[RMDB]
Description
Conditions: 150 mM KOAc, 10 mM MgCl2 and 150 mM bicine (pH 8.5), 24 C. Structure probing data (2A3) for a 207-nucleotide construct. 2A3 adducts were read by reverse transcription with SuperScript II with manganese.

RNA sequence: GGGAACGACUCGAGUAGAGUCGAAAAACAUUGACAUUUUCGUGGUUUAUUAGGUCCACAUGGUUGUAUCUCUACCAUAUUGCUUAAACAAGUAACACACGCCGUACAUAAACCAUCUUCAGGUUCAAGAUAGUAAUCAUUAGGACACGUUUUACCACCUUCGCGUCUGAUUCGUCAGACGCGAAGGAAAAGAAACAACAACAACAAC
Reactivity to 2A3 in 0.01 (KOAc 150mM, MgCl2 10mM, bicine 150mM(pH8.5), 24C), signal-to-noise 1, nucleotides 027 to 156: a000c060a060u030u080g100a030c050a060u150u110u040u070c030g010u090g010g020u060u010u050a050u010u070a060g020g040u030c010c000a020c030a040u010g000g000u060u010g090u110a100u030c060u040c040u070a060c000c000a030u110a050u150u000g000c010u060u070a050a220a100c030a090a060g030u010a150a010c020a020c020a000c130g030c020c020g140u140a030c040a050u020a010a110a020c000c000a000u050c040u210u040c090a040g010g000u090u160c080a080a000g000a050u080a000g150u030a000a060u010c030a000u040u060a050g060g000a000c000a010c110g030u000u000u090u070a010c000c000a020
Source: RMDB library OK3TST, as collected in RNAgym.